RNA sequence: GGGAACGACUCGAGUAGAGUCGAAAAAUGAAUACUAGAUCAAAUCCCAGAGGCAUCACAUGGACUGAGUGUGACUCCUACUGCCACCCCAGCCUCUGGCCGAUGGCUCCUCCAACCCGUCUCUGCAUGAAAACUUAAAGCAGGCUGUUUUGCCACAUAUCUUAGGUAUCUUCGGAUACCUAAGAUAAAAAGAAACAACAACAACAAC
Reactivity to DMS in 0.01 (KOAc 150mM, MgCl2 10mM, bicine 150mM(pH8.5), 24C), signal-to-noise 1, nucleotides 027 to 156: a110u010g000a110a070u010a110c050u000a090g010a120u010c040a050a140a140u000c050c000c020a140g000a120g020g000c030a080u000c040a050c040a070u000g040g000a080c050u010g020a100g020u000g070u000g000a060c040u000c060c100u000a070c100u000g020c030c020a060c040c010c020c040a080g000c030c000u010c080u000g040g010c000c010g000a070u000g030g000c000u000c030c000u000c020c030a070a090c030c010c010g030u000c030u020c020u020g000c010a100u030g010a050a080a090a080c110u000u000a030a080a190g050c060a110g000g010c000u000g000u010u010u000u010g010c000c020a060c120a240
Reactivity to 2A3 in 0.01 (KOAc 150mM, MgCl2 10mM, bicine 150mM(pH8.5), 24C), signal-to-noise 2, nucleotides 027 to 156: a000u070g010a060a020u100a160c140u130a090g060a130u120c050a040a050a110u030c000c000c010a020g010a010g020g010c030a020u060c050a060c020a050u050g020g050a090c120u120g030a090g060u020g020u060g050a070c020u030c060c030u060a060c030u020g020c010c010a040c030c010c000c000a000g010c000c000u000c030u060g000g000c000c030g060a030u050g010g010c010u010c000c010u000c020c010a040a050c040c000c010g070u020c060u000c000u020g030c020a100u110g090a060a030a070a110c040u070u060a020a090a060g040c060a020g030g050c000u020g040u080u100u050u100g040c010c010a030c000a020